[RMDB]
RNA sequence: GGGAACGACUCGAGUAGAGUCGAAAACGGCUGAAACUGCCACCAGCGAGGGGGUGGUCCAUUGUGGUGAGAUCAUCGAUGGACGAUACUCACCCAGGCAAUCGAUAAAUAAUUAGUGCGCAGUUUGACUCAUAGGGCACUUCGGUGCCCUAUGAGUAAAAGAAACAACAACAACAAC
Reactivity to DMS in 0.01 (KOAc 150mM, MgCl2 10mM, bicine 150mM(pH8.5), 24C), signal-to-noise 1, nucleotides 027 to 126: c020g020g010c020u040g080a090a080a080c010u000g000c000c050a040c010c210a070g040c000g000a010g000g040g000g000g020u010g000g010u000c000c090a000u000u000g000u000g000g040u000g000a210g000a170u070c040a010u040c000g030a020u010g020g000a070c010g000a100u050a150c160u010c020a020c000c000c000a070g010g010c160a090a070u050c140g000a060u020a060a140a030u020a110a040u000u000a050g000u000g020c040g010c000a050g000u000u000u000g000
Reactivity to 2A3 in 0.01 (KOAc 150mM, MgCl2 10mM, bicine 150mM(pH8.5), 24C), signal-to-noise 2, nucleotides 027 to 126: c020g080g040c050u110g070a050a080a000c000u030g000c000c000a000c000c000a030g070c020g050a070g010g000g000g010g000u030g060g030u070c050c000a160u120u030g030u130g100g000u010g050a110g040a110u110c040a000u000c000g140a200u250g220g000a000c000g000a000u030a040c010u070c040a020c030c000c000a060g040g000c030a050a050u060c010g070a050u080a110a180a000u250a000a080u250u120a020g010u010g010c090g000c000a040g000u000u000u160g040